[RMDB]
About this RNA:
This 177-nucleotide RNA was probed chemically with DMS and 2A3. For DMS, 1,425 sequencing reads were counted. Conditions: 150 mM KOAc, 10 mM MgCl2 and 150 mM bicine (pH 8.5), 24 C. The data come from the RNA Mapping Database (RMDB), library OK2TST.
RNA sequence: GGGAACGACUCGAGUAGAGUCGAAAAAAGUCGCCAAGAUCUUGCCGAGCAUCCUGGAUGAUUACACUUGGAAUGACUCGUAUAAGGCACUUGAUGUGAUGCGCAGGAUCAUCUACAACAUCGGCCACGUUUUACGGGGAUUCGUCCCCGUAAAACGAAAAGAAACAACAACAACAAC
Reactivity to DMS in 0.01 (KOAc 150mM, MgCl2 10mM, bicine 150mM(pH8.5), 24C), signal-to-noise 2, nucleotides 027 to 126: a060a070g000u010c070g020c010c040a100a060g020a020u000c020u000u000g000c030c020g020a100g010c020a040u000c000c000u000g000g040a070u000g020a230u020u000a120c110a070c030u010u010g020g000a020a050u020g010a130c000u000c020g030u010a070u010a020a110g020g000c040a050c100u000u010g030a030u000g030u000g000a010u010g020c130g020c010a010g000g010a050u000c020a020u000c020u000a100c160a050a020c040a030u010c030g000g000c010c030a170
Reactivity to 2A3 in 0.01 (KOAc 150mM, MgCl2 10mM, bicine 150mM(pH8.5), 24C), signal-to-noise 1, nucleotides 027 to 126: a000a000g080u050c040g020c060c010a000a030g020a090u000c010u010u010g000c010c010g020a000g000c010a010u040c030c020u060g060g020a110u080g060a070u190u280a100c050a020c100u030u020g000g090a140a100u060g110a230c000u000c030g010u080a090u030a160a070g060g000c000a000c120u080u130g020a030u060g050u010g070a020u020g000c020g000c030a010g000g000a020u070c000a010u000c040u050a090c040a090a000c010a040u030c000g020g000c000c040a040
The 2A3 profile rests on 1,034 reads. High DMS reactivity at an A or C suggests that its Watson-Crick edge is free.